[RMDB]
RNA sequence: GGGAACGACUCGAGUAGAGUCGAAAAGUAGGCAUGGAAGACGAACUGAUGAUCAGAGUAUCGGUUGAGGCCGGUUAUUCCGAUCAGGGCCGCGAACAAGUUUCCAGAGUAUUUGUCGGCGAAGUGGGAGGUGAAGGAAUUUCGAUUCCUUCACCUCAAAAGAAACAACAACAACAAC
Reactivity to DMS in 0.01 (KOAc 150mM, MgCl2 10mM, bicine 150mM(pH8.5), 24C), signal-to-noise 4, nucleotides 027 to 126: g010u010a070g020g010c040a070u000g010g010a060a060g010a080c060g020a070a080c080u000g000a140u000g010a040u000c000a040g000a040g010u000a010u010c010g010g010u000u010g030a150g020g000c000c010g020g020u010u010a040u000u000c010c020g000a020u000c000a090g010g020g010c040c030g020c080g020a050a070c110a090a080g010u010u000u000c030c030a100g000a150g010u010a080u000u000u000g010u000c040g000g020c060g000a050a060g030u000g000g000
Reactivity to 2A3 in 0.01 (KOAc 150mM, MgCl2 10mM, bicine 150mM(pH8.5), 24C), signal-to-noise 1, nucleotides 027 to 126: g120u120a050g060g000c090a040u070g020g070a070a030g040a090c020g010a070a080c040u070g050a090u040g030a010u140c000a010g010a010g010u030a010u030c010g020g010u040u040g160a280g240g000c000c000g000g000u020u040a030u050u000c000c000g000a000u020c020a020g000g090g020c020c070g030c040g010a030a000c020a120a050g040u040u030u070c010c030a020g010a010g110u090a110u150u130u120g090u090c010g020g040c060g050a060a040g070u150g060g080